[RMDB]
RNA sequence: GGGAACGACUCGAGUAGAGUCGAAAAAACGUGUGGAAAAUGUUCACAGAUCUUUUCGAUUAUUUUCCUAUAACCGCAUUAGUAGAUAAUAAAAUUUUCUGUCUGCAUGGAGGACUUUCCCCCAUGAGAUUAGUACUACGUUCGCGUAGUACUAAUCAAAAGAAACAACAACAACAAC
Reactivity to 2A3 in 0.01 (KOAc 150mM, MgCl2 10mM, bicine 150mM(pH8.5), 24C), signal-to-noise 3, nucleotides 027 to 126: a000a000c100g010u120g020u060g050g030a050a020a060a180u130g070u150u150c030a010c020a130g080a120u060c050u080u110u090u140c060g030a030u000u060a040u020u110u030u000c010c010u040a090u070a170a080c050c010g030c030a050u020u070a030g030u040a000g030a040u070a120a040u100a040a150a080a110u100u120u050u060c030u060g090u010c010u020g030c000a010u010g020g030a070g010g060a040c030u060u080u090c020c010c000c000c000a030u070g010a040
Reactivity to DMS in 0.01 (KOAc 150mM, MgCl2 10mM, bicine 150mM(pH8.5), 24C), signal-to-noise 2, nucleotides 027 to 126: a040a040c120g000u010g030u020g000g020a060a120a130a040u000g010u000u000c160a080c040a050g010a020u000c020u000u000u000u010c150g000a050u000u000a030u000u000u000u000c020c040u000a060u020a080a120c130c150g010c120a070u000u000a050g010u000a080g000a060u000a010a040u010a050a030a070a080u000u000u000u000c030u000g000u000c130u000g010c000a030u000g010g020a120g000g000a100c130u000u000u000c010c000c000c190c070a100u000g010a130
Chemical mapping of a 177-nucleotide RNA with 2A3 and DMS. The reactions ran in a buffer of 150 mM KOAc, 10 mM MgCl2 and 150 mM bicine (pH 8.5), at 24 C. Source: RMDB library OK2TST, as collected in RNAgym. For 2A3 the reverse transcriptase was SuperScript II with manganese. Reactivities are given for positions 27 through 126.